The record gives the reactivity of an RNA of 177 nucleotides to DMS and 2A3. Values cover nucleotides 27 to 126. The DMS profile rests on 25,015 reads. It was measured as part of the RMDB library OK2TRN. The 2A3 profile rests on 10,095 reads.

RNA sequence: GGGAACGACUCGAGUAGAGUCGAAAAUGUUUAAAAUAUGCUCAUGAAAAUGGUUGUCCUUGGGAUAUAUCGACAUGUACACAUGCAGCACAGAAAGGGCAUUUAGAAUGUUUAAAAUAUGCACAUGAUUAUCAGUAUCAUUCGUGAUACUGAUAAUAAAAGAAACAACAACAACAAC
Reactivity to DMS in 0.01 (KOAc 150mM, MgCl2 10mM, bicine 150mM(pH8.5), 24C), signal-to-noise 9, nucleotides 027 to 126: u010g010u000u000u010a060a080a110a110u010a060u000g010c030u000c010a040u010g000a060a090a110a110u000g010g010u000u000g010u000c030c030u000u000g020g010g010a090u000a060u010a040u000c080g010a080c050a030u000g010u010a080c130a090c040a040u000g010c110a040g010c020a030c080a060g010a050a080a120g000g000g000c020a020u000u000u000a090g010a080a050u000g000u000u000u000a050a050a070a090u000a060u000g010c090a050c120a060u010g010
Reactivity to 2A3 in 0.01 (KOAc 150mM, MgCl2 10mM, bicine 150mM(pH8.5), 24C), signal-to-noise 6, nucleotides 027 to 126: u030g000u010u070u060a090a090a000a000u130a040u070g010c000u000c030a040u050g090a050a050a040a090u110g050g010u030u030g010u010c040c000u060u080g130g020g010a020u040a010u020a020u130c030g040a030c030a050u100g060u130a030c050a000c000a040u040g020c030a000g000c020a020c010a050g100a050a060a020g020g000g010c010a010u020u000u010a060g040a080a020u050g020u010u100u070a070a060a040a040u250a080u140g040c060a040c030a110u140g010